[RMDB]
RNA sequence: GGGAACGACUCGAGUAGAGUCGAAAACAGCUGAGGGCCAGGGAGGGGAAGAGAUAAUAACUGGGUCUGAGGAGGAACCCAGGGGUCUUCCUUCUCCAGUCCUUGGCCAAGAGGCAGCAAUUGCCCACAAAGUGUAGGGGUUCGCCCCUACACUUUGAAAAGAAACAACAACAACAAC
Reactivity to 2A3 in 0.01 (KOAc 150mM, MgCl2 10mM, bicine 150mM(pH8.5), 24C), signal-to-noise 1, nucleotides 027 to 126: c060a010g010c000u040g020a000g080g080g000c050c030a060g060g040g000a030g000g000g030g020a040a000g070a000g010a030u090a130a070u040a100a080c000u000g000g000g000u060c020u080g090a160g070g160a050g000g020a120a090c000c010c000a010g020g020g010g000u000c030u040u060c020c000u070u060c000u010c000c020a000g070u090c000c020u010u010g000g000c000c000a040a020g060a060g030g000c010a000g000c010a080a150u210u150g070c020c010c000a070
Reactivity to DMS in 0.01 (KOAc 150mM, MgCl2 10mM, bicine 150mM(pH8.5), 24C), signal-to-noise 2, nucleotides 027 to 126: c120a120g010c020u000g000a140g000g010g020c010c030a040g000g010g010a060g000g020g000g000a020a020g010a070g030a030u010a060a050u010a090a080c010u000g010g010g010u000c030u010g000a190g000g000a210g010g000a060a060c010c000c010a020g000g000g000g020u000c080u000u000c100c000u000u000c000u010c000c010a070g000u000c000c010u020u000g010g020c010c050a050a050g000a190g020g020c000a040g020c110a060a070u000u020g020c000c000c030a250